An RNA of 177 nucleotides, treated with 2A3 and DMS and read out base by base.
Reactivities are rounded to 0.1 and cut off at 0 and 3.
Reactivities are given for positions 27 through 126.
DMS adducts were read by reverse transcription with MarathonRT.
The RNA was probed in 150 mM KOAc, 10 mM MgCl2 and 150 mM bicine (pH 8.5) at 24 C.

[RMDB]
RNA sequence: GGGAACGACUCGAGUAGAGUCGAAAAGAGACACAUAGGGAUUGUGAUUUUAAUAAACCACUCAUUGAGUGGCCACUUACUGAGUAUGAUUUUACUGAUUAUAAGGUACAACUCUUUGAGAAGUACUCUACGUCACAUAGUUCGCUAUGUGACGUAGAAAAGAAACAACAACAACAAC
Reactivity to 2A3 in 0.01 (KOAc 150mM, MgCl2 10mM, bicine 150mM(pH8.5), 24C), signal-to-noise 2, nucleotides 027 to 126: g030a000g000a000c010a000c000a020u130a080g100g110g020a060u080u020g010u010g050a060u050u000u000u170a120a090u100a050a050a030c010c010a030c000u020c010a120u040u150g000a000g020u000g000g020c000c000a030c000u050u060a020c030u010g010a000g040u020a020u100g140a160u080u030u130u180a030c020u010g050a010u030u090a040u040a160a040g000g000u050a140c040a050a040c060u000c000u040u030u020g030a010g010a070a020g080u040a050c000u000
Reactivity to DMS in 0.01 (KOAc 150mM, MgCl2 10mM, bicine 150mM(pH8.5), 24C), signal-to-noise 1, nucleotides 027 to 126: g010a050g020a100c020a000c010a030u010a100g010g030g000a130u000u000g020u000g000a150u000u000u000u000a100a070u000a050a110a160c040c010a050c010u000c020a120u010u000g070a010g000u000g000g000c040c030a120c200u000u000a100c070u010g020a030g020u000a050u000g000a190u020u000u000u000a070c030u010g010a090u000u000a050u000a050a080g010g010u000a030c060a080a120c010u000c010u000u010u000g000a000g010a050a070g020u000a020c220u000